RNA sequence: GGGAACGACUCGAGUAGAGUCGAAAACGCUGGGUACGGUUGGCCGGUCGCUGAUGACCAUGUGGAAGAAUACUGAAGCGCGCACGGUAUUCCCACAUGCAAGGCGGAUUUCCAACGGUACCUGUGCUGAAGCGCGCACGGCAACCGAAAGGUGCGACUAGGAAGGUUUCUUCGGAAACCUUCCUAGAAAAGAAACAACAACAACAAC
Reactivity to 2A3 in 0.01 (KOAc 150mM, MgCl2 10mM, bicine 150mM(pH8.5), 24C), signal-to-noise 2, nucleotides 027 to 156: c020g000c010u030g000g000g020u040a030c070g120g000u010u020g030g020c160c100g120g080u280c020g010c040u050g050a280u140g020a070c010c010a000u010g000u020g000g070a210a150g000a070a210u010a000c000u020g080a300a080g010c010g000c000g000c010a020c010g000g000u000a000u010u010c000c020c000a000c000a000u010g010c030a050a080g000g000c040g020g000a060u160u120u090c000c000a010a000c030g160g000u010a000c000c010u010g000u020g000c000u060g040a120a030g000c000g000c000g000c010a010c000g020g000c010a050a060c010c000g050a060a020a030g030g000u030g000c010g010a010
This 207-nucleotide RNA was probed chemically with 2A3. Source: RMDB library RNAMAK, as collected in RNAgym. The RNA was probed in 150 mM KOAc, 10 mM MgCl2 and 150 mM bicine (pH 8.5) at 24 C.